Chemical mapping of a 177-nucleotide RNA with 2A3 and DMS. The data come from the RNA Mapping Database (RMDB), library OK2TST. The reactions ran in a buffer of 150 mM KOAc, 10 mM MgCl2 and 150 mM bicine (pH 8.5), at 24 C. For 2A3, 1,994 sequencing reads were counted. The DMS profile rests on 10,725 reads. For DMS the reverse transcriptase was MarathonRT.
RNA sequence: GGGAACGACUCGAGUAGAGUCGAAAAUUUAUGUUUAUUUGCGCGGGACUUGGUUCAUCAACCCUGUAUUGGGGGGUGAUGGAGUGGGCUUAUUACUAUCAGACACCGGGUCUGAAUAUUGCGCCAAUGGAUUACUAGUAUUCGUACUAGUAAUCCAAAAAGAAACAACAACAACAAC
Reactivity to 2A3 in 0.01 (KOAc 150mM, MgCl2 10mM, bicine 150mM(pH8.5), 24C), signal-to-noise 2, nucleotides 027 to 126: u050u090u040a170u080g020u000u160u040a100u010u070u090g010c000g000c000g030g010g030a070c050u040u050g050g030u110u030c000a010u000c000a030a130c010c010c000u050g150u130a300u110u300g050g010g000g000g000g010u000g010a000u010g010g000a040g120u050g020g030g020c010u000u030a030u100u140a100c020u050a080u080c000a000g010a050c020a020c110c150g210g080g000u000c000u000g010a020a000u100a060u020u110g010c000g010c000c010a060a080
Reactivity to DMS in 0.01 (KOAc 150mM, MgCl2 10mM, bicine 150mM(pH8.5), 24C), signal-to-noise 7, nucleotides 027 to 126: u010u000u010a080u010g010u000u000u000a070u020u010u000g010c030g050c020g010g000g000a070c040u000u000g010g010u000u000c010a010u000c020a040a050c000c000c000u000g010u010a150u010u020g020g010g000g010g010g010u000g000a020u000g010g000a040g010u000g010g000g010c070u000u000a050u000u000a090c190u000a090u010c020a030g000a030c030a240c210c170g010g020g010u000c010u010g000a040a100u000a060u000u000g020c030g020c020c280a060a100